[RMDB]
Record summary
Structure probing data (DMS and 2A3) for a 177-nucleotide construct. For DMS the reverse transcriptase was MarathonRT. For 2A3, 1,991 sequencing reads were counted. It was measured as part of the RMDB library OK2TST. The reactions ran in a buffer of 150 mM KOAc, 10 mM MgCl2 and 150 mM bicine (pH 8.5), at 24 C.
RNA sequence: GGGAACGACUCGAGUAGAGUCGAAAAGCGUCUGGCCCAAGGUGAUCGCAGGCACGCACCGCGGAGAUCUCCUCUUCGUCUCCAACUGGGAAUCGAACGACAUCGCCUUCCUCGAUCCGCUCUCGGGAGUGAUCCCUUAGUUCGCUAAGGGAUCACUAAAAGAAACAACAACAACAAC
Reactivity to DMS in 0.01 (KOAc 150mM, MgCl2 10mM, bicine 150mM(pH8.5), 24C), signal-to-noise 2, nucleotides 027 to 126: g000c100g010u010c030u030g030g000c000c020c040a090a080g000g040u010g000a020u000c020g010c080a120g030g020c120a080c120g000c070a080c040c030g000c110g040g040a160g000a050u010c090u000c020c030u020c010u000u010c040g010u000c020u020c010c010a160a140c090u000g000g000g000a100a080u000c040g000a030a080c100g000a110c090a110u010c040g010c060c000u010u000c070c010u000c010g010a070u010c020c020g020c040u010c000u000c030g020g010g000
Reactivity to 2A3 in 0.01 (KOAc 150mM, MgCl2 10mM, bicine 150mM(pH8.5), 24C), signal-to-noise 1, nucleotides 027 to 126: g020c040g010u000c080u070g130g000c000c000c030a020a060g040g000u070g020a120u090c040g010c070a050g080g000c060a010c090g010c030a020c020c070g050c010g090g000a050g000a040u050c030u040c080c020u020c000u050u040c030g020u000c010u000c030c000a100a090c110u110g000g050g020a020a070u120c050g010a090a080c050g050a010c020a090u050c020g000c020c060u050u060c000c000u060c020g040a090u000c000c040g000c010u000c000u060c030g020g030g030
Reactivities are given for positions 27 through 126.